[RMDB]
RNA sequence: GGGAACGACUCGAGUAGAGUCGAAAAUCCCCUGAGAGGCCUCUUCCUAGGUCCGGAGUCUAUCUCCAUCUGGUCUGUUCGGGCCCUCUUCGCCGGGGGAGCCCCCUCUCCGUCCUUAUCCUUCUUUCCGAGAAUUCCUUUGAUGUUUCCCAGCCAGGUAUAAUUCAUAGUUCGCUAUGAAUUAUACAAAAGAAACAACAACAACAAC
Reactivity to 2A3 in 0.01 (KOAc 150mM, MgCl2 10mM, bicine 150mM(pH8.5), 24C), signal-to-noise 1, nucleotides 027 to 156: u020c000c000c000c010u040g030a020g120a200g090g060c020c010u070c020u150u070c060c000u130a050g060g000u000c020c120g010g000a020g020u090c080u300a250u140c020u090c020c030a050u020c050u060g010g020u020c030u080g120u160u100c050g000g020g000c020c020c000u020c020u150u170c060g040c060c030g000g000g000g020g000a000g000c000c000c000c020c000u080c010u030c000c010g090u060c010c030u090u110a080u170c000c060u030u080c010u110u080u010c030c000g040a040g070a140a080u040u070c010c000u080u120u070g040a060u070g070u020u010u000c000c020c000a000g000c010c020a010g050